[RMDB]
RNA sequence: GGGAACGACUCGAGUAGAGUCGAAAAGAUUCCUAACCCACUCAAACGCAUGAGAUCUUCAACAAAUCUUUAUACUAAACAAUGAAUGCCCAAACAUACCAUUAAUCGGCCUACUCCUAGCUGCAGCAGGAAAAUCAGCUCAAUUCGGACUACAUCCCAAGAUGUGGUCCUUCGGGACCACAUCUUGAAAAGAAACAACAACAACAAC
Reactivity to 2A3 in 0.01 (KOAc 150mM, MgCl2 10mM, bicine 150mM(pH8.5), 24C), signal-to-noise 2, nucleotides 027 to 156: g040a090u040u100c000c010u000a030a080c000c000c000a080c020u060c020a080a110a040c010g040c030a070u140g060a000g000a090u010c030u120u070c060a090a070c010a020a200a080u000c120u090u240u080a100u130a110c030u130a190a070a040c070a060a080u070g040a100a010u100g050c030c060c000a130a050a000c060a050u090a090c020c000a040u040u130a150a090u090c060g000g000c000c000u000a030c010u050c000c020u030a020g000c000u010g010c000a010g020c010a000g000g120a050a130a000a020u000c010a020g000c000u010c020a040a110u120u030c010g000g050a020c080u040a010c060a030u040c030c000